The data come from the RNA Mapping Database (RMDB), library OK3TST. This 207-nucleotide RNA was probed chemically with DMS and 2A3. Values cover nucleotides 27 to 156. High 2A3 reactivity points to a flexible backbone, as in loops and unpaired stretches. The reactions ran in a buffer of 150 mM KOAc, 10 mM MgCl2 and 150 mM bicine (pH 8.5), at 24 C.
[RMDB]
RNA sequence: GGGAACGACUCGAGUAGAGUCGAAAAUGGAUCAUGGAGUCACAUGUCAUGGCCUCUCAGAUCCCCUCCUUCAUCCUGGUCCUUGAGAUGAGUUUGUAGAAGAUACCAGAAGGUAAAUGCUGAGAGCAGAGGUCUGAGAGGUUGUGGCUGGAUAGAAACCCAUCGAAAAUUUCGAUUUUCGAUGGGUAAAAGAAACAACAACAACAAC
Reactivity to DMS in 0.01 (KOAc 150mM, MgCl2 10mM, bicine 150mM(pH8.5), 24C), signal-to-noise 1, nucleotides 027 to 156: u000g020g020a100u000c020a090u000g090g000a150g030u000c040a090c060a120u030g030u020c000a030u010g020g010c000c000u000c000u000c000a090g010a040u000c000c020c020c030u000c020c020u000u000c010a110u020c010c030u020g040g000u010c090c030u000u010g020a140g030a170u000g010a160g020u000u000u010g000u010a170g020a090a050g020a140u000a080c010c010a150g020a080a080g020g020u010a060a090a130u010g020c040u000g020a130g030a120g050c060a120g010a060g040g010u000c020u000g010a060g000a070g060g040u000u000g080u000g020g020c000u010g000g020a180u020a050g000a140a140
Reactivity to 2A3 in 0.01 (KOAc 150mM, MgCl2 10mM, bicine 150mM(pH8.5), 24C), signal-to-noise 3, nucleotides 027 to 156: u080g030g000a030u090c060a030u110g020g020a070g040u020c040a050c010a130u100g010u010c020a010u010g010g000c000c000u000c000u010c000a020g000a080u100c000c000c020c020u000c000c010u030u060c000a060u040c020c020u020g050g000u040c020c020u110u080g100a100g030a110u160g050a060g230u100u140u300g030u080a080g020a110a010g010a040u080a070c000c000a010g010a110a050g200g000u150a050a150a060u070g000c050u050g020a020g010a010g230c100a030g030a050g030g000u000c000u000g000a000g000a000g000g000u000u000g010u000g000g000c010u000g010g010a000u040a050g080a050a150